[RMDB]
RNA sequence: GGGAACGACUCGAGUAGAGUCGAAAAACGGACAACAUCUAAACUGGCAAGGCCUGUACCAAUAAUCGCAAUAUCGUCCAGUUCAUUUACUUCGUCUAACGUAUUAUAUGUUGGAUAAGGCGUAGCGGUAACCCUCCAACUUCGGUUGGAGGGUUACAAAAGAAACAACAACAACAAC
Reactivity to DMS in 0.01 (KOAc 150mM, MgCl2 10mM, bicine 150mM(pH8.5), 24C), signal-to-noise 1, nucleotides 027 to 126: a120c070g000g000a010c070a050a090c100a150u010c070u020a050a120a090c060u000g010g010c020a100a120g000g020c040c010u000g000u000a130c020c030a060a050u010a070a090u010c100g000c030a040a100u010a080u010c130g000u010c000c060a030g000u000u010c170a090u000u020u020a100c020u020u000c090g080u000c010u000a010a010c030g020u030a090u000u000a050u000a050u000g000u000u000g000g010a050u000a030a060g000g000c070g000u000a100g020c070g000
Reactivity to 2A3 in 0.01 (KOAc 150mM, MgCl2 10mM, bicine 150mM(pH8.5), 24C), signal-to-noise 1, nucleotides 027 to 126: a010c000g070g060a000c040a070a020c000a020u000c020u280a130a110a030c040u120g140g020c040a050a050g060g020c000c070u080g030u120a070c000c000a030a090u110a070a010u030c030g010c100a060a050u130a010u280c000g000u000c050c090a020g000u020u060c080a120u030u170u170a080c020u070u080c040g030u000c010u010a030a000c040g020u030a020u100u290a260u050a030u150g050u020u040g000g000a000u000a150a060g030g010c070g020u040a020g030c090g030
Structure probing data (DMS and 2A3) for a 177-nucleotide construct. The reactions ran in a buffer of 150 mM KOAc, 10 mM MgCl2 and 150 mM bicine (pH 8.5), at 24 C. DMS (dimethyl sulfate) methylates the pairing face of unpaired adenines and cytosines. Values cover nucleotides 27 to 126. It was measured as part of the RMDB library OK2TST. For DMS the reverse transcriptase was MarathonRT.